Description:
The data come from the RNA Mapping Database (RMDB), library OK1LIB. The record gives the reactivity of an RNA of 177 nucleotides to 2A3 and DMS. High 2A3 reactivity points to a flexible backbone, as in loops and unpaired stretches. 2A3 adducts were read by reverse transcription with SuperScript II with manganese.

[RMDB]
RNA sequence: GGGAACGACUCGAGUAGAGUCGAAAACACGCAGCCGUCACGUGCUAGCCAUGCAGCGCGUGGGUCAGGACACCGUGCUGAAGUGGCGGAAGCGUCGGUGUCACGUUGACCGAUUGCGCGACACGACGCAGGUGCCGAGCUUCGGCUUGGUACUUGCAAAAGAAACAACAACAACAAC
Reactivity to 2A3 in 0.01 (KOAc 150mM, MgCl2 10mM, bicine 150mM(pH8.5), 24C), signal-to-noise 9, nucleotides 027 to 126: c050a010c020g020c010a010g030c010c010g040u030c000a010c020g020u020g010c020u020a020g020c010c010a060u120g010c030a010g000c000g000c000g000u030g010g020g020u010c010a020g000g050a000c000a000c000c000g010u020g000c000u050g020a100a020g010u020g040g030c010g010g030a020a010g000c000g040u030c010g020g010u010g000u000c030a030c140g060u020u060g010a020c010c010g070a090u080u280g000c010g000c000g020a010c020a010c040g100a010c060
Reactivity to DMS in 0.01 (KOAc 150mM, MgCl2 10mM, bicine 150mM(pH8.5), 24C), signal-to-noise 9, nucleotides 027 to 126: c070a090c080g000c030a080g010c030c030g010u010c020a080c020g010u010g000c020u010a100g010c040c090a100u030g010c090a080g000c010g010c000g010u010g000g010g000u000c010a080g000g000a040c020a010c020c010g040u010g000c000u020g010a130a100g020u010g000g010c020g000g000a200a030g000c000g000u000c010g000g010u000g000u000c000a060c080g010u020u010g010a030c010c020g000a050u010u030g020c000g000c020g000a100c120a060c100g000a110c160